[RMDB]
RNA sequence: GGGAACGACUCGAGUAGAGUCGAAAACAUCUGGAUCGUUAAGUUCCAUAGGAAUCGGCGAUUUGUUAAUGCAGAUCACGGUUUGGUAACUAUGGGGAAGGUCUUUCGGCUUUUUGCCGAAUCGUGAGGGUAUGAAUAUCUUCGGAUAUUCAUACCCAAAAGAAACAACAACAACAAC
Reactivity to 2A3 in 0.01 (KOAc 150mM, MgCl2 10mM, bicine 150mM(pH8.5), 24C), signal-to-noise 5, nucleotides 027 to 126: c020a070u060c040u100g040g000a010u010c020g050u120u180a090a120g060u140u050c000c000a000u020a010g050g020a000a000u010c000g020g010c060g070a000u000u000u010g110u110u260a290a130u300g010c010a010g010a030u000c010a010c010g020g020u010u000u070g120g050u160a090a020c000u010a010u010g000g030g000g080a090a020g000g000u020c000u050u030u020c020g000g000c010u050u080u040u260u300g000c000c000g000a000a030u050c050g020u030g110a080
Reactivity to DMS in 0.01 (KOAc 150mM, MgCl2 10mM, bicine 150mM(pH8.5), 24C), signal-to-noise 2, nucleotides 027 to 126: c040a030u010c110u020g000g030a020u000c000g010u010u010a180a120g010u020u000c000c010a030u020a020g000g020a030a010u000c020g000g000c160g000a000u000u010u000g000u000u020a140a060u020g000c000a030g010a000u020c000a040c010g000g030u020u010u000g040g000u060a050a190c010u000a000u010g000g000g000g000a090a130g000g000u010c030u000u000u010c010g010g030c000u030u020u050u010u040g040c000c000g000a000a040u030c110g010u010g000a300
This 177-nucleotide RNA was probed chemically with 2A3 and DMS. For DMS the reverse transcriptase was MarathonRT.